[RMDB]
Structure probing data (DMS and 2A3) for a 177-nucleotide construct. Reactivities are given for positions 27 through 126.
RNA sequence: GGGAACGACUCGAGUAGAGUCGAAAAACACACACUAAGAGACAUCUGAUAGUGGAGUGUGCAACAUUCUGAUGUCAUAAUUCUUUACCUAAGAACUGACAUCAGGUGUCUUAGGUAAGUGUGUGAAGAUAGUUAGCUGAUUCGUCAGUUAGCUAUCAAAAGAAACAACAACAACAAC
Reactivity to DMS in 0.01 (KOAc 150mM, MgCl2 10mM, bicine 150mM(pH8.5), 24C), signal-to-noise 9, nucleotides 027 to 126: a120c010a020c000a010c010a020c000u010a130a130g000a020g000a020c040a020u010c020u000g010a090u030a230g030u040g000g010a030g040u000g010u020g000c300a140a050c010a020u000u000c010u010g010a080u020g000u000c000a010u010a120a190u010u010c000u000u000u020a110c200c120u020a030a020g000a010a010c060u000g000a030c030a060u010c010a000g000g010u000g000u000c000u010u000a050g000g030u020a050a020g010u000g000u000g010u010g000a060a090
Reactivity to 2A3 in 0.01 (KOAc 150mM, MgCl2 10mM, bicine 150mM(pH8.5), 24C), signal-to-noise 9, nucleotides 027 to 126: a000c010a000c000a000c000a000c010u060a090a040g020a000g000a040c000a010u000c010u030g060a090u110a160g210u250g080g010a030g010u080g020u140g220c110a140a110c000a010u030u000c010u030g060a080u070g010u000c010a010u070a110a060u050u010c010u040u060u150a180c060c090u080a020a010g000a010a010c030u010g020a010c010a030u030c000a010g000g000u010g010u000c000u020u060a100g060g040u120a110a050g000u000g000u000g000u000g010a010a010
2A3 adducts were read by reverse transcription with SuperScript II with manganese. Conditions: 150 mM KOAc, 10 mM MgCl2 and 150 mM bicine (pH 8.5), 24 C. Values are in units of 0.01, from 0 to 300, in steps of 10. Source: RMDB library OK1LIB, as collected in RNAgym. The 2A3 profile rests on 96,129 reads.